The record gives the reactivity of an RNA of 170 nucleotides to 2A3 and DMS. The 2A3 profile rests on 5,907 reads. DMS (dimethyl sulfate) methylates the pairing face of unpaired adenines and cytosines.

RNA sequence: GGGAACGACUCGAGUAGAGUCGAAAAUCUCUUUCCUCGUCUUCCUCGGUCAACCUCCGGAGUUCCUCUUCCUCCUCCUUGCUGAGGGACUUUCCUCCCGCGCUCAGUUGUUUCUUCUUGUUCUCGAAUGCAUCACCCUUCGGGGUGAUGAAAAGAAACAACAACAACAAC
Reactivity to 2A3 in 0.01 (KOAc 150mM, MgCl2 10mM, bicine 150mM(pH8.5), 24C), signal-to-noise 3, nucleotides 027 to 129: u030c000u000c000u050u030u010c020c020u020c000g040u020c070u080u020c020c030u040c030g020g010u070c050a080a040c000c000u010c000c000g000g040a000g020u030u010c020c000u020c020u020u040c000c000u030c010c010u080c000c000u050u040g000c020u020g020a110g000g020g030a060c000u010u030u040c000c000u040c000c010c040g050c000g040c060u050c020a050g000u010u010g020u040u060u010c000u000u000c060u050u110g010u020u030c050u030c060g050a050a040u150g020
Reactivity to DMS in 0.01 (KOAc 150mM, MgCl2 10mM, bicine 150mM(pH8.5), 24C), signal-to-noise 2, nucleotides 027 to 129: u040c080u010c020u060u040u020c000c000u030c120g040u020c050u000u000c040c080u000c040g040g020u000c090a100a240c110c000u030c030c090g040g000a120g030u130u000c030c010u000c010u000u000c000c030u020c040c020u030c020c040u000u000g050c070u030g040a120g000g000g000a100c090u010u010u020c070c000u030c030c010c040g020c110g070c030u020c080a110g040u070u000g030u000u000u000c060u010u030c090u040u010g030u000u020c020u000c000g040a100a120u080g020